Overview: Chemical mapping of a 207-nucleotide RNA with 2A3 and DMS. For DMS the reverse transcriptase was MarathonRT.
RNA sequence: GGGAACGACUCGAGUAGAGUCGAAAAGUGUGAAGUGAGACUCCCGCUUACGAGCACGAAUUACAUGGGAGUGUUAACAUUACUGGGCGCCAGGAGCCCUACCUGGACAAGUAGCGAAGUACAGCCCGAGUAUGAGCUACGACUAAUUACGGGCACAAAAUGAUCAUCAGUUCGCUGAUGAUCAUUUAAAAGAAACAACAACAACAAC
Reactivity to 2A3 in 0.01 (KOAc 150mM, MgCl2 10mM, bicine 150mM(pH8.5), 24C), signal-to-noise 6, nucleotides 027 to 156: g060u060g010u030g070a070a060g020u020g020a070g040a030c010u000c000c020c010g010c020u070u070a050c160g040a030g040c050a020c100g080a150a130u250u140a120c110a160u180g000g000g020a020g010u020g080u120u100a070a020c030a080u020u160a070c090u120g050g110g000c080g010c010c000a010g010g020a040g010c010c000c000u020a020c000c000u010g010g000a040c020a090a050g010u010a000g010c010g030a090a010g000u000a010c010a030g010c010c000c000g000a010g000u000a020u240g020a010g000c010u010a010c030g070a020c020u040a000a010u110u120a040c020g000g000g000c030a000c020a040
Reactivity to DMS in 0.01 (KOAc 150mM, MgCl2 10mM, bicine 150mM(pH8.5), 24C), signal-to-noise 4, nucleotides 027 to 156: g010u000g040u010g000a100a180g020u010g010a210g000a180c010u010c010c030c020g030c080u000u000a110c110g030a300g030c040a190c050g010a130a100u000u000a080c140a150u020g020g020g020a110g020u010g040u000u000a050a090c050a080u010u000a070c040u000g030g020g020c040g010c050c010a050g010g010a170g010c000c020c000u000a040c010c010u000g030g000a130c080a090a190g010u000a030g010c030g000a160a170g000u010a030c010a070g000c020c010c030g000a070g000u000a020u000g010a300g030c030u000a040c020g000a120c090u000a050a090u000u000a070c120g000g000g010c010a100c150a040
The DMS profile rests on 6,591 reads. The RNA was probed in 150 mM KOAc, 10 mM MgCl2 and 150 mM bicine (pH 8.5) at 24 C.